[RMDB]
RNA sequence: GGGAACGACUCGAGUAGAGUCGAAAAAUGGGUGAAAGCACUAUUGCCCAUCAUAGCAGCUGUCCACAAAGCAGUCUGCUAGUCGUCGUUGCACCGCUUUGCAAGGCGCAACGCACGGCGAGACCGUCGAAUUGCGGGGACAUCCUUACAGCUCAAGGCAAGCAGUGUUCUUCGGAACACUGCUUGCAAAAGAAACAACAACAACAAC
Reactivity to 2A3 in 0.01 (KOAc 150mM, MgCl2 10mM, bicine 150mM(pH8.5), 24C), signal-to-noise 1, nucleotides 027 to 156: a010u030g030g020g030u100g070a050a020a000g060c060a050c130u070a130u120u160g000c000c000c000a000u070c060a020u030a000g000c000a000g000c000u020g000u250c050c020a140c000a120a060a010g000c050a000g010u210c000u050g000c020u000a070g000u000c000g000u000c000g000u000u000g000c000a040c020c030g050c200u070u090u300g100c140a240a150g000g000c000g000c000a000a000c000g000c050a000c000g000g000c000g000a020g030a000c030c030g010u230c060g100a260a130u200u080g100c000g000g000g000g070a030c010a060u040c000c060u070u140a060c040a070g050c050u060c110a000a010g000

The record gives the reactivity of an RNA of 207 nucleotides to 2A3. It was measured as part of the RMDB library RSTRND. For 2A3, 387 sequencing reads were counted. The RNA was probed in 150 mM KOAc, 10 mM MgCl2 and 150 mM bicine (pH 8.5) at 24 C. For 2A3 the reverse transcriptase was SuperScript II with manganese.